[RMDB]
RNA sequence: GGGAACGACUCGAGUAGAGUCGAAAACGACCGCAGUUCGCUGCGGUCGAAAAGAACUGACUACCGUUCGCCUAGCCGGUGUGAGUUUAAGGGCGGAGAUUAAAACCCUGACGUUCGCGUCAGGGAACCAAUACACGGUGUUCGCACCGUGUAUUGGAAAAGAAACAACAACAACAAC
Reactivity to DMS in 0.01 (KOAc 150mM, MgCl2 10mM, bicine 150mM(pH8.5), 24C), signal-to-noise 2, nucleotides 027 to 126: c020g000a030c000c010g060c000a000g020u000u000c200g010c000u010g050c000g010g000u000c000g020a000a010a070a080g000a050a040c100u020g010a090c050u010a060c040c010g010u000u000c040g020c050c030u000a100g010c160c010g030g010u010g010u010g000a070g010u000u000u000a060a120g000g000g010c060g010g020a070g010a120u000u000a050a060a080a160c000c000c000u000g010a020c010g020u010u000c250g000c020g020u000c000a020g010g000g000a010a030

Chemical mapping of a 177-nucleotide RNA with DMS. Reactivities are given for positions 27 through 126. The DMS profile rests on 1,816 reads.